This 207-nucleotide RNA was probed chemically with 2A3 and DMS. High DMS reactivity at an A or C suggests that its Watson-Crick edge is free. For 2A3 the reverse transcriptase was SuperScript II with manganese. For DMS the reverse transcriptase was MarathonRT. The DMS profile rests on 9,984 reads.
[RMDB]
RNA sequence: GGGAACGACUCGAGUAGAGUCGAAAAGUAGCCCUUUGUUGAGUCCACGGCAACAUUCUCGGCCUAAUUAGUGGAUUAGCUGCUGGCAUUUAUGUUCGGAAUAAAAGCAGUGAAACAAGAAUCGAACUAGCUCUCGAUUUGGAAGUUAGCAACCUAAACUAUAUUACUUGUUCGCAAGUAAUAUAGUAAAAGAAACAACAACAACAAC
Reactivity to 2A3 in 0.01 (KOAc 150mM, MgCl2 10mM, bicine 150mM(pH8.5), 24C), signal-to-noise 7, nucleotides 027 to 156: g090u090a030g050c020c000c000u030u030u030g010u010u010g020a030g020u000c010c000a000c000g020g000c010a020a010c010a080u180u060c140u100c080g090g000c030c040u100a190a130u140u130a090g010u010g020g020a020u050u200a010g000c000u010g000c000u000g000g030c030a030u020u060u030a110u140g060u050u090c070g040g030a040a030u030a050a040a010a010g000c000a000g000u010g040a020a040a020c040a060a060g060a060a020u040c010g010a010a020c000u030a080g050c010u010c000u000c030g110a200u070u060u150g060g030a060a030g040u070u070a010g050c030a050a060c010c010u110a140a090
Reactivity to DMS in 0.01 (KOAc 150mM, MgCl2 10mM, bicine 150mM(pH8.5), 24C), signal-to-noise 4, nucleotides 027 to 156: g020u000a140g020c020c010c020u010u000u000g020u000u000g000a140g020u000c020c020a060c060g000g030c010a060a060c040a110u000u010c030u000c030g000g030c040c040u000a090a110u000u000a080g040u000g000g020a090u000u010a260g010c010u000g010c010u000g020g020c300a090u010u010u000a070u010g020u010u010c080g030g010a090a100u000a090a220a170a050g010c010a050g010u000g010a140a070a130c080a080a140g020a070a060u000c030g000a060a060c010u010a050g000c020u000c040u000c010g050a190u000u000u000g010g010a050a050g000u000u000a060g020c010a050a110c020c020u000a060a130